[RMDB]
RNA sequence: GGGAACGACUCGAGUAGAGUCGAAAAGAUAUGGAGAGGUAGGUUAGCCGCGGUCGGAAACGACCGACGGUGUUGCCUACUACCCACCUCCUAAGUCAAAACCUGAAGCCGUUCGCGGCUUCAGGAACCUACCGAAUAAGUUCGCUUAUUCGGUAGGAAAAGAAACAACAACAACAAC
Reactivity to DMS in 0.01 (KOAc 150mM, MgCl2 10mM, bicine 150mM(pH8.5), 24C), signal-to-noise 2, nucleotides 027 to 126: g010a020u000a050u010g000g000a010g000a160g030g000u000a020g010g000u000u000a090g030c000c000g010c020g000g000u000c000g010g000a040a040a110c010g010a030c000c000g010a020c010g000g010u000g000u000u010g010c010c010u010a010c000u010a130c230c090c110a210c190c010u000c000c000u020a020a110g000u010c040a110a050a080a160c000c000u000g000a020a000g010c000c010g040u000u010c250g010c030g010g000c000u000u000c000a010g020g000a040a020
Reactivity to 2A3 in 0.01 (KOAc 150mM, MgCl2 10mM, bicine 150mM(pH8.5), 24C), signal-to-noise 2, nucleotides 027 to 126: g010a010u130a060u120g020g000a020g030a020g020g040u010a000g020g040u110u300a020g000c020c000g000c010g000g000u000c000g000g000a080a050a040c010g010a010c020c010g020a030c000g010g000u010g050u050u130g010c000c000u020a000c010u000a010c050c040c010a160c040c010u000c020c010u030a060a030g070u040c050a000a050a140a250c000c000u000g010a020a000g000c000c010g050u080u230c300g030c030g220g010c000u020u000c000a000g000g000a000a000
The record gives the reactivity of an RNA of 177 nucleotides to DMS and 2A3. For 2A3 the reverse transcriptase was SuperScript II with manganese. The data come from the RNA Mapping Database (RMDB), library TTRDEL. Conditions: 150 mM KOAc, 10 mM MgCl2 and 150 mM bicine (pH 8.5), 24 C.